[RMDB]
RNA sequence: GGGAACGACUCGAGUAGAGUCGAAAAUGCUCGAGGAUCUCCUCCCUCCCCUUCGAGGAUUCCCCUGCGACGGGUAGGCUCAUCCUGAGACCGGGGAGCUUCGAAGAUCUCUCUAUUCUCCAGAAAGGUACUAUAUGUGGUUCGCCACAUAUAGUACAAAAGAAACAACAACAACAAC
Reactivity to DMS in 0.01 (KOAc 150mM, MgCl2 10mM, bicine 150mM(pH8.5), 24C), signal-to-noise 2, nucleotides 027 to 126: u000g000c020u010c010g000a020g000g000a180u000c040u000c030c020u000c020c020c020u000c000c000c010c030u010u000c010g010a030g000g010a110u010u000c020c020c000c010u000g010c030g010a300c100g000g000g020u010a060g000g000c060u000c080a110u000c010c010u000g000a110g000a300c140c080g000g010g000g000a040g020c030u000u000c010g000a040a080g020a120u010c040u000c030u010c010u000a090u010u000c020u000c030c120a160g000a060a090a080g040
Reactivity to 2A3 in 0.01 (KOAc 150mM, MgCl2 10mM, bicine 150mM(pH8.5), 24C), signal-to-noise 1, nucleotides 027 to 126: u020g010c000u010c020g010a020g020g000a050u040c020u000c030c000u000c010c020c000u000c020c000c000c000u020u000c010g000a020g040g020a160u060u040c000c000c010c030u040g030c000g020a020c020g020g000g020u000a040g100g000c060u040c060a080u050c000c020u050g010a080g040a110c000c050g000g000g000g000a000g020c010u010u010c010g010a010a030g000a030u000c040u000c010u000c020u050a110u150u060c010u040c030c010a050g120a110a070a000g140